Annotation
Structure probing data (DMS and 2A3) for a 207-nucleotide construct. Conditions: 150 mM KOAc, 10 mM MgCl2 and 150 mM bicine (pH 8.5), 24 C.

[RMDB]
RNA sequence: GGGAACGACUCGAGUAGAGUCGAAAAGUUCACAGACUAAGUGAUGGUUGGGGAGAUGUCUAGUCUCUCUUAAGAUAUAGUCGGGCACCUCGGGAAACCUUGGUGGUAAUUCAACUGUGAAUAUGCUCUAGUUUCGGCUAGUUCAUAUCAAUAUGAGGUAGUAUGUAGCGUUCGCGCUACAUACUACAAAAGAAACAACAACAACAAC
Reactivity to DMS in 0.01 (KOAc 150mM, MgCl2 10mM, bicine 150mM(pH8.5), 24C), signal-to-noise 1, nucleotides 027 to 156: g000u000u010c020a070c030a110g020a110c040u010a090a260g020u000g030a100u000g010g020u000u000g010g010g010g000a050g010a050u000g000u010c200u020a130g020u020c000u000c030u000c020u000u010a040a140g020a140u000a120u000a070g020u000c020g030g010g000c030a030c020c020u020c190g030g000g000a130a090a110c010c030u010u010g010g000u010g010g000u000a020a150u010u020c020a100a170c060u010g050u000g000a070a040u000a020u000g000c030u000c000u000a020g020u000u000u000c250g010g000c000u000a010g000u000u020c010a000u010a010u000c040a030a070u000a050u010g000a170g030
Reactivity to 2A3 in 0.01 (KOAc 150mM, MgCl2 10mM, bicine 150mM(pH8.5), 24C), signal-to-noise 3, nucleotides 027 to 156: g030u080u050c000a030c010a030g060a030c020u100a100a060g110u050g140a100u120g060g060u130u060g030g010g010g000a000g020a020u050g080u180c120u120a070g010u010c000u000c000u000c000u010u080a020a020g030a000u070a010u070a100g040u040c010g000g040g000c000a000c000c000u020c000g000g000g020a040a040a040c010c010u000u010g020g000u050g000g050u060a030a030u060u120c060a040a020c050u030g000u000g090a030a020u020a020u080g010c010u000c010u040a020g000u010u030u050c210g030g000c010u010a000g030u020u030c000a010u030a020u040c080a110a050u100a120u270g040a050g040

The data come from the RNA Mapping Database (RMDB), library RSTRND. DMS adducts were read by reverse transcription with MarathonRT.